This 177-nucleotide RNA was probed chemically with DMS.
[RMDB]
RNA sequence: GGGAACGACUCGAGUAGAGUCGAAAACAUCAGGAGGACCUUCCGCGCACUUCCAAGCAGGAGCUUUCCUUCCAAGCGCACUUCCAAUCUACUCGAGACGAGGAGGAGGAGGAGGAUUCCCACAAAAUAAUGCUCCCAAAUUCGUUUGGGAGCAUUAAAAAGAAACAACAACAACAAC
Reactivity to DMS in 0.01 (KOAc 150mM, MgCl2 10mM, bicine 150mM(pH8.5), 24C), signal-to-noise 2, nucleotides 027 to 126: c130a070u000c110a160g000g040a020g000g000a090c300c040u000u000c010c020g000c050g010c050a090c110u000u010c120c070a060a140g020c040a100g010g010a060g010c150u000u000u000c020c010u010u000c050c030a110a060g000c080g030c100a060c030u000u000c010c040a220a060u010c010u020a030c020u000c010g000a090g020a120c040g000a070g030g000a120g000g000a120g000g000a070g000g000a050g000g030a180u010u020c020c010c000a070c190a060a020a020a040
Background: The reactions ran in a buffer of 150 mM KOAc, 10 mM MgCl2 and 150 mM bicine (pH 8.5), at 24 C.